Chemical mapping of a 177-nucleotide RNA with DMS. For DMS the reverse transcriptase was MarathonRT. It was measured as part of the RMDB library RFMREP. Reactivities are rounded to 0.1 and cut off at 0 and 3. Conditions: 150 mM KOAc, 10 mM MgCl2 and 150 mM bicine (pH 8.5), 24 C.

[RMDB]
RNA sequence: GGGAACGACUCGAGUAGAGUCGAAAAUUUGGCUACGUUGGUCCAACCGAAUACGGGCUUCUGAUUCCAUGAAGAGCUUUUGCAAUUUAGAGUUUGAAAUGAAAUUGUGUUUCCGGAUUAUACUCCACUUUGUAAGGUUGUUCGCAACCUUACAAAGAAAAGAAACAACAACAACAAC
Reactivity to DMS in 0.01 (KOAc 150mM, MgCl2 10mM, bicine 150mM(pH8.5), 24C), signal-to-noise 1, nucleotides 027 to 126: u000u000u000g010g010c040u010a080c060g000u000u000g010g000u010c070c050a090a190c040c070g020a060a130u020a140c180g030g010g000c030u020u020c020u010g000a100u000u000c000c040a050u000g010a100a170g000a070g000c010u010u010u000u040g000c050a080a070u000u000u010a050g010a090g010u000u010u010g000a120a070a070u000g000a010a010a070u000u010g000u010g000u010u030u010c020c000g000g000a050u000u000a140u010a130c140u010c010c030a280